[RMDB]
RNA sequence: GGGAACGACUCGAGUAGAGUCGAAAACGGUUACGCCUUCUUUACCGUUAUCAAGGAAGGUACUCGGCCAUGCUAAGGGAAGCAUUAUUCCUUAGCCGCAUGUCGCCGCCAGCAUGGUGUGAGGGGAAAAAGUAUGCUGGGUUCGCCCAGCAUACAAUCCAUAUGACAAGUUCGCUUGUCAUAUGGAAAAAGAAACAACAACAACAAC
Reactivity to DMS in 0.01 (KOAc 150mM, MgCl2 10mM, bicine 150mM(pH8.5), 24C), signal-to-noise 4, nucleotides 027 to 156: c010g010g000u010u000a030c040g000c010c000u000u010c000u000u000u000a040c010c030g020u000u010a020u000c100a030a040g000g020a040a020g010g030u000a050c030u000c020g010g000c000c040a090u000g020c010u000a050a100g000g010g010a040a130g000c170a170u010u000a170u000u000c020c010u000u000a070g030c030c110g030c070a140u000g010u000c080g030c020c050g010c030c050a070g000c030a060u010g020g020u010g020u010g010a060g020g010g000g000a060a080a080a080a130g010u000a000u000g010c000u000g000g010g020u000u000c300g030c000c000c000a020g000c000a000u000a000c000a040a080
Reactivity to 2A3 in 0.01 (KOAc 150mM, MgCl2 10mM, bicine 150mM(pH8.5), 24C), signal-to-noise 9, nucleotides 027 to 156: c000g000g000u020u030a030c060g010c000c000u010u010c010u010u050u050a040c020c010g260u110u100a050u110c060a010a000g030g000a000a010g010g010u040a050c030u020c020g020g000c010c010a020u030g000c010u060a100a110g020g000g010a030a010g030c090a160u120u110a120u160u120c010c000u040u050a020g020c000c010g010c020a070u180g110u210c100g000c040c010g010c020c010a010g010c010a030u030g000g040u090g060u120g060a060g020g040g010g030a010a100a020a050a020g010u000a000u000g000c000u000g000g000g010u010u020c060g080c010c000c000a000g000c000a000u000a000c000a000a000